[RMDB]
RNA sequence: GGGAACGACUCGAGUAGAGUCGAAAAGAUAUGGAUGACCUCAGCUUUUGACGCUCGACGGAUCGGAAACGAUCCCAAGAGCGAUAAGCUGUGGUCAUCCUAAGUCAAAGGUCACUUCGGUGACCAAUCAUUGAUGGCAGUUCGCUGCCAUCAAUGAAAAAGAAACAACAACAACAAC
Reactivity to 2A3 in 0.01 (KOAc 150mM, MgCl2 10mM, bicine 150mM(pH8.5), 24C), signal-to-noise 1, nucleotides 027 to 126: g020a020u090a020u240g000g020a000u020g010a010c000c010u060c040a000g000c020u160u120u200u250g300a170c060g000c000u000c020g050a030c010g000g000a020u020c000g010g000a030a050a010c030g000a000u030c020c000c020a050a040g010a000g000c000g000a000u000a020a000g000c010u000g000u030g010g000u000c010a000u010c000c000u010a010a030g000u000c020a000a000a170g000g000u000c000a010c010u020u170c300g150g000u000g000a000c000c000a000a060
Reactivity to DMS in 0.01 (KOAc 150mM, MgCl2 10mM, bicine 150mM(pH8.5), 24C), signal-to-noise 3, nucleotides 027 to 126: g000a090u000a300u010g020g020a000u000g000a020c000c000u000c000a000g030c000u000u000u000u000g020a250c030g020c000u000c000g020a300c300g000g000a000u000c000g000g010a090a090a220c000g000a000u000c000c000c010a020a300g000a000g020c000g010a020u000a000a000g000c000u000g000u000g000g000u000c000a000u000c000c000u000a000a060g020u040c060a150a100a220g000g000u000c000a020c000u000u010c220g020g000u000g000a000c000c000a070a020